[RMDB]
RNA sequence: GGGAACGACUCGAGUAGAGUCGAAAAGAUAUGGAGCUGUCAAGGUGCAACUCCGAGUCGGAAACGACGUUUGACGAGUUGAACUACACUGACAGCUCCUAAGUCAAAAGGCGAGUUCGCUCGCCAAGCUCGUAACUAAGUUCGCUUAGUUACGAGCAAAAGAAACAACAACAACAAC
Reactivity to DMS in 0.01 (KOAc 150mM, MgCl2 10mM, bicine 150mM(pH8.5), 24C), signal-to-noise 3, nucleotides 027 to 126: g010a040u000a300u000g000g000a000g010c010u000g000u000c000a050a130g000g000u020g010c000a010a010c000u010c000c040g000a060g020u000c000g010g010a120a110a220c010g010a000c000g000u000u010u000g010a230c300g000a040g000u000u010g000a070a020c030u010a100c130a090c160u010g010a010c010a010g010c010u000c000c000u000a000a060g000u000c050a060a070a130a080g000g020c000g010a020g010u010u000c240g010c010u010c000g000c000c000a040a050
Reactivity to 2A3 in 0.01 (KOAc 150mM, MgCl2 10mM, bicine 150mM(pH8.5), 24C), signal-to-noise 2, nucleotides 027 to 126: g020a000u040a010u150g000g000a010g010c020u000g000u010c030a110a130g080g000u050g060c000a000a000c000u020c000c000g000a020g000u000c010g010g010a040a050a000c030g050a010c020g040u100u300u300g070a050c020g000a020g010u000u010g010a040a050c030u060a020c180a030c060u030g010a000c010a000g000c000u000c000c000u010a000a000g000u020c010a020a040a080a060g030g000c010g000a010g000u150u210c270g110c230u000c000g000c000c000a000a010
Annotation:
Conditions: 150 mM KOAc, 10 mM MgCl2 and 150 mM bicine (pH 8.5), 24 C. Chemical mapping of a 177-nucleotide RNA with DMS and 2A3. Source: RMDB library TTRDEL, as collected in RNAgym. For DMS the reverse transcriptase was MarathonRT. The 2A3 profile rests on 3,865 reads.